RNA sequence: GGGAACGACUCGAGUAGAGUCGAAAAGGUCACUUGGCUCAAGCCAAGUGAGGGCGUUUUUCCAGCUUGCUGGCACCCCUGAUUAUUCAGGAAGGUGAUCCCCAUUAGUUCAACUUUUAGCCACCCCGUAAAAAGAUCAAUUCGUUGAUCUUUUUACAAAAGAAACAACAACAACAAC
Reactivity to DMS in 0.01 (KOAc 150mM, MgCl2 10mM, bicine 150mM(pH8.5), 24C), signal-to-noise 9, nucleotides 027 to 126: g010g010u000c000a010c000u000u000g000g020c000u020c280a170a190g010c000c010a010a010g000u000g010a030g010g010g010c200g000u000u000u000u000u010c010c010a090g000c030u020u000g010c020u010g000g010c020a030c020c020c000c000u000g000a030u010u020a170u020u010c010a020g000g000a100a060g020g010u000g010a100u000c030c010c010c070a120u020u010a090g010u010u000c100a090a110c040u010u010u000u010a170g010c030c040a180c020c010c010c110
Reactivity to 2A3 in 0.01 (KOAc 150mM, MgCl2 10mM, bicine 150mM(pH8.5), 24C), signal-to-noise 9, nucleotides 027 to 126: g050g030u020c000a000c000u000u000g000g010c030u110c300a210a070g010c000c000a000a000g000u000g000a010g000g040g010c080g020u040u030u010u110u030c000c000a000g010c030u060u160g020c010u030g020g000c010a010c000c000c000c000u000g010a040u040u300a110u250u090c010a010g050g020a140a100g050g000u020g020a070u040c010c000c000c010a080u080u130a030g040u050u050c040a090a070c050u040u050u050u120a020g000c000c010a040c020c010c010c000